The data come from the RNA Mapping Database (RMDB), library OK2TRN. This 177-nucleotide RNA was probed chemically with DMS and 2A3. In probing experiments dimethyl sulfate is read out at A N1 and C N3, which are open when not base-paired.
RNA sequence: GGGAACGACUCGAGUAGAGUCGAAAAAGGUAGAGGCCAGGGCAGCUGCUCAGCACCCUAAGGUGCCCAGGACAGCUGCUCAGAGAAUCUGUAGCCCAAAAUGUCAACAGUGACCUGGCUGAGAAGCGUAAAAACUAAAAUUCGUUUUAGUUUUUACAAAAGAAACAACAACAACAAC
Reactivity to DMS in 0.01 (KOAc 150mM, MgCl2 10mM, bicine 150mM(pH8.5), 24C), signal-to-noise 7, nucleotides 027 to 126: a050g010g020u000a060g010a170g010g020c080c040a080g010g000g000c000a020g010c000u000g000c020u000c030a160g000c000a010c010c010c300u020a130a100g030g010u000g000c010c100c170a130g010g010a020c010a010g010c020u000g000c000u010c040a030g000a100g010a160a080u010c010u010g010u010a130g010c000c010c020a060a060a080a070u000g000u000c070a080a090c060a040g020u000g000a160c030c060u000g010g010c010u000g000a180g010a110a100g010c140
Reactivity to 2A3 in 0.01 (KOAc 150mM, MgCl2 10mM, bicine 150mM(pH8.5), 24C), signal-to-noise 2, nucleotides 027 to 126: a000g110g000u090a060g020a060g080g030c020c010a020g020g000g000c000a010g000c010u010g010c010u020c020a010g000c010a010c010c020c060u140a240a190g000g000u000g000c000c030c030a010g010g040a010c000a000g020c000u010g000c000u000c010a000g010a000g000a010a050u010c020u040g050u100a060g020c000c030c000a050a080a000a050u180g020u060c040a020a010c000a080g020u000g020a050c000c000u020g020g000c010u010g020a040g020a100a030g050c070
Background
The RNA was probed in 150 mM KOAc, 10 mM MgCl2 and 150 mM bicine (pH 8.5) at 24 C.